[RMDB]
RNA sequence: GGGAACGACUCGAGUAGAGUCGAAAAGAUAUGGAAGUGAAGCGAUAAGCUCCUUGUCGGAAACGACAAUGAGCUUUUGACGCCACUUCCUAAGUCAAAGUGGGAACACGUUCGCGUGUUCCCACAAGCAUAAGGUUUUGUUCGCAAAACCUUAUGCAAAAGAAACAACAACAACAAC
Reactivity to DMS in 0.01 (KOAc 150mM, MgCl2 10mM, bicine 150mM(pH8.5), 24C), signal-to-noise 4, nucleotides 027 to 126: g000a030u000a300u000g000g000a010a010g010u000g000a160a150g040c000g000a120u000a050a020g010c000u000c000c100u000u000g020u010c010g000g000a070a060a170c010g010a010c000a010a000u010g000a020g000c010u010u000u000u010g000a120c030g000c020c000a010c000u000u010c000c000u000a000a050g000u000c010a090a080a150g010u000g000g020g000a000a010c000a010c010g020u000u020c240g040c010g020u000g000u000u000c000c000c010a000c010a020a050
Reactivity to 2A3 in 0.01 (KOAc 150mM, MgCl2 10mM, bicine 150mM(pH8.5), 24C), signal-to-noise 3, nucleotides 027 to 126: g010a000u050a020u090g000g010a000a000g010u030g050a270a030g020c020g040a070u040a240a100g010c010u010c000c000u010u000g000u010c010g010g000a070a020a050c010g000a000c010a000a000u010g000a000g000c000u060u030u030u060g020a010c010g020c000c000a010c010u020u000c010c000u010a050a010g030u010c050a120a060a090g010u010g000g000g000a020a000c010a010c040g020u040u060c300g010c020g130u030g000u020u000c000c000c010a000c000a010a000
Overview:
Source: RMDB library TTRDEL, as collected in RNAgym. An RNA of 177 nucleotides, treated with DMS and 2A3 and read out base by base. The RNA was probed in 150 mM KOAc, 10 mM MgCl2 and 150 mM bicine (pH 8.5) at 24 C. Reactivities are given for positions 27 through 126. For 2A3 the reverse transcriptase was SuperScript II with manganese. DMS adducts were read by reverse transcription with MarathonRT.